Structure probing data (DMS and 2A3) for a 177-nucleotide construct. For 2A3, 2,235 sequencing reads were counted. For 2A3 the reverse transcriptase was SuperScript II with manganese. Conditions: 150 mM KOAc, 10 mM MgCl2 and 150 mM bicine (pH 8.5), 24 C. Source: RMDB library M2PK50, as collected in RNAgym.
RNA sequence: GGGAACGACUCGAGUAGAGUCGAAAAGCGUCCUGGUUCGCCAGGACGCAAAUAAAUGGUAGAGUGAGACCGUCUAACUCAGAUAACCAGAAAUAGACGGAAAAACUGACUUGUUCGCAAGUCAGAACUCAGUAAAACACUUCGGUGUUUUACUGAGAAAAGAAACAACAACAACAAC
Reactivity to DMS in 0.01 (KOAc 150mM, MgCl2 10mM, bicine 150mM(pH8.5), 24C), signal-to-noise 1, nucleotides 027 to 126: g000c020g000u000c000c000u010g000g000u010u000c200g040c000c030a000g000g000a010c000g020c020a010a040a040u000a070a090a140u000g030g010u010a070g000a000g000u010g000a130g010a110c000c010g000u000c000u000a120a010c030u020c010a080g010a230u010a090a260c010c010a100g000a020a050a100u010a010g000a020c000g010g000a060a040a050a050a080c000u000g000a000c000u010u000g000u000u040c130g020c020a000a000g000u010c000a000g000a050a110
Reactivity to 2A3 in 0.01 (KOAc 150mM, MgCl2 10mM, bicine 150mM(pH8.5), 24C), signal-to-noise 2, nucleotides 027 to 126: g010c010g010u010c010c000u000g020g040u020u070c180g030c040c000a000g000g000a000c000g000c000a000a000a000u010a010a020a040u100g030g020u060a070g010a010g020u010g020a040g120a190c000c010g010u000c000u000a000a000c000u000c000a010g030a190u180a040a050c040c010a030g090a020a090a020u070a030g010a000c010g000g000a020a100a000a000a000c010u000g000a000c000u020u000g000u100u120c150g000c100a000a000g000u000c000a000g000a000a000